[RMDB]
The record gives the reactivity of an RNA of 207 nucleotides to 2A3. 2A3 adducts were read by reverse transcription with SuperScript II with manganese. The data come from the RNA Mapping Database (RMDB), library OK3TST. The reactions ran in a buffer of 150 mM KOAc, 10 mM MgCl2 and 150 mM bicine (pH 8.5), at 24 C.
RNA sequence: GGGAACGACUCGAGUAGAGUCGAAAACAUUAUAUCAGAGACCUUUUAAUGGUAUCUCUUUGCCUAGUAAAGACCAAAUGCCUUGAUGUCGCAUUAAAAGUCAUCUAAAAGCUUUUAGUAUCCAAUUUACACCCAAAUACACUAUUUUAAAAAUGAAUCACUAGGUAAUCUUCGGAUUACCUAGUGAAAAAGAAACAACAACAACAAC
Reactivity to 2A3 in 0.01 (KOAc 150mM, MgCl2 10mM, bicine 150mM(pH8.5), 24C), signal-to-noise 1, nucleotides 027 to 156: c020a020u230u230a040u150a050u300c010a030g070a010g000a110c020c000u110u020u220u240a250a050u220g030g000u050a110u030c000u000c000u000u050u080g080c000c000u050a090g040u090a050a120a100g020a030c000c050a040a040a040u000g000c000c000u060u010g070a050u070g040u130c000g000c020a010u000u130a120a080a080a000g030u010c000a010u050c040u040a000a120a000a140g020c000u070u000u000u110a050g000u050a040u030c020c000a030a010u010u000u150a020c000a030c000c040c000a030a130a000u250a040c070a050c130u040a140u100u150u140u240a020a170a080a090a150u040g050a050a020